[RMDB]
RNA sequence: GGGAACGACUCGAGUAGAGUCGAAAAGGAGCAGAUGCAGAAGAGCAAUGACAUCAACCUGAUCGGUCAAUUUGGUGUUGGCUUCUACUCUGUCUACCUGGUGGCAGACUAUGUCGAGGUGGUCAGCCGAAAACUCAAGAUUCGUCUUGAGUUUUCGAAAAGAAACAACAACAACAAC
Reactivity to DMS in 0.01 (KOAc 150mM, MgCl2 10mM, bicine 150mM(pH8.5), 24C), signal-to-noise 6, nucleotides 027 to 126: g010g010a090g000c010a030g000a030u010g040c020a010g010a030a030g010a100g020c100a120a100u010g000a020c020a020u000c040a050a050c110c070u000g010a100u010c240g010g010u000c080a060a100u010u000u000g000g010u000g010u000u000g010g000c010u000u000c010u000a040c020u000c010u000g000u000c030u010a120c010c010u000g020g020u010g020g000c020a070g010a070c060u000a030u010g010u000c090g010a100g010g010u000g010g010u000c030a090g020c110
Reactivity to 2A3 in 0.01 (KOAc 150mM, MgCl2 10mM, bicine 150mM(pH8.5), 24C), signal-to-noise 5, nucleotides 027 to 126: g020g010a020g010c020a010g020a060u130g000c030a000g010a060a010g010a020g050c070a080a150u270g030a030c000a020u010c020a010a040c000c010u100g060a140u160c170g030g070u040c060a090a120u060u030u100g030g020u040g000u020u030g040g000c030u020u000c000u010a020c010u000c010u030g060u110c010u080a210c020c000u040g050g050u100g020g010c010a010g030a160c030u090a080u120g150u110c040g030a040g010g020u050g000g000u000c020a000g040c030
Structure probing data (DMS and 2A3) for a 177-nucleotide construct. The RNA was probed in 150 mM KOAc, 10 mM MgCl2 and 150 mM bicine (pH 8.5) at 24 C. For DMS, 10,710 sequencing reads were counted.